[RMDB]
RNA sequence: GGGAACGACUCGAGUAGAGUCGAAAACGGUGUGUGACGGCCUCAACGCACCGUCGCGGGGCGGUGCGGAUGGCGUGGGUGUGACGGUGAUUGCCGGCCCGCUGGAGGACACCGGCGCACGCGCGGCAACCGGGAUAUAAUUCGUUAUAUCCCGGUUAAAAGAAACAACAACAACAAC
Reactivity to 2A3 in 0.01 (KOAc 150mM, MgCl2 10mM, bicine 150mM(pH8.5), 24C), signal-to-noise 8, nucleotides 027 to 126: c010g010g000u020g000u000g020u020g030a020c010g020g030c000c010u020c020a030a050c010g000c000a000c000c000g010u020c040g040c130g100g220g000g000c020g000g010u030g010c060g010g020a100u140g060g030c030g010u120g010g020g010u180g070u190g120a040c020g000g020u090g110a300u080u300g030c010c000g040g000c020c010c000g000c030u060g040g010a030g020g020a030c040a050c170c000g000g000c010g010c000a010c000g060c010g000c020g040g030c020
Reactivity to DMS in 0.01 (KOAc 150mM, MgCl2 10mM, bicine 150mM(pH8.5), 24C), signal-to-noise 9, nucleotides 027 to 126: c030g010g010u000g020u010g010u000g000a070c030g010g000c010c010u000c040a300a140c020g010c000a010c000c000g020u000c020g010c300g010g000g010g010c010g010g010u000g010c010g000g000a070u010g010g000c090g020u000g020g010g020u000g020u010g010a130c020g010g010u000g010a170u010u010g010c000c010g010g000c010c020c030g010c030u000g010g010a070g010g000a150c150a190c020c000g000g000c010g010c010a020c020g000c020g010c060g010g010c150